[RMDB]
RNA sequence: GGGAACGACUCGAGUAGAGUCGAAAAGAAUUGGUAUGUAAGCUACCCCUUCCGGUAGCUGCGUCACACUUUAAGAGUGUGCAUACUGAGCCGAAGCUCAGCUUCGGUCCCCCAAGGGAAGAUCAAAGCUAUGGCCACGCUUCGGCGUGGCCAUAGCAAAAGAAACAACAACAACAAC
Reactivity to 2A3 in 0.01 (KOAc 150mM, MgCl2 10mM, bicine 150mM(pH8.5), 24C), signal-to-noise 1, nucleotides 027 to 126: g090a060a130u040u030g010g000u010a000u000g000u000a010a020g000c000u010a000c000c000c000c000u000u040c000c000g000g010u000a000g000c000u000g000c000g000u000c000a000c010a000c000u030u100u180a300a140g190a000g300u030g000u000g010c000a000u000a030c000u000g040a040g010c000c000g040a000a000g010c020u090c300a070g000c000u030u010c000g010g040u000c020c000c000c000c000a020a040g050g000g000a040a000g000a060u160c210a020a050a000